[RMDB]
Chemical mapping of a 207-nucleotide RNA with 2A3 and DMS.
RNA sequence: GGGAACGACUCGAGUAGAGUCGAAAACAGCCCCUAACAUAACACUUUUGUGCUACUGAUCAAUAAAUGGUAGCUAUUGUUAUUGAUAUGCCAUUUCAUGACUGAUGGAGCUGGGAGGAGUCACCCGAGGAAGUGCUGACUUGAGGGCAUGUGGCUAGUAAUCCAUUUUAUUCGUAAAAUGGAUUACAAAAGAAACAACAACAACAAC
Reactivity to 2A3 in 0.01 (KOAc 150mM, MgCl2 10mM, bicine 150mM(pH8.5), 24C), signal-to-noise 8, nucleotides 027 to 156: c030a040g050c020c010c010c020u060a090a020c030a080u080a050a010c010a040c060u090u140u170u280g100u070g070c010u010a010c020u050g110a160u170c120a140a100u210a190a110a050u200g020g000u010a010g010c010u030a020u020u060g010u020u030a050u040u110g050a050u040a050u210g020c010c020a050u030u070u090c070a060u130g090a090c030u030g020a040u060g040g030a030g030c050u030g010g020g010a040g000g020a030g030u020c020a020c050c010c040g020a040g020g040a050a040g020u040g060c040u040g040a090c010u040u070g030a050g020g020g000c020a010u060g020u030g050g010c020u010a030
Reactivity to DMS in 0.01 (KOAc 150mM, MgCl2 10mM, bicine 150mM(pH8.5), 24C), signal-to-noise 3, nucleotides 027 to 156: c050a160g020c050c000c010c070u000a080a150c100a100u000a050a080c060a060c100u000u010u000u000g020u000g010c000u000a030c020u000g000a200u010c050a100a200u000a060a100a080u000g010g020u000a040g030c050u000a020u000u000g020u000u000a050u010u000g030a130u000a070u010g000c000c020a090u000u000u000c090a120u000g010a060c040u020g020a150u000g010g010a070g000c030u000g010g010g010a070g000g000a090g010u000c030a100c020c020c030g000a100g030g000a040a060g010u000g010c040u000g000a090c050u000u000g000a100g000g000g020c050a100u000g040u000g020g020c020u000a190
The RNA was probed in 150 mM KOAc, 10 mM MgCl2 and 150 mM bicine (pH 8.5) at 24 C.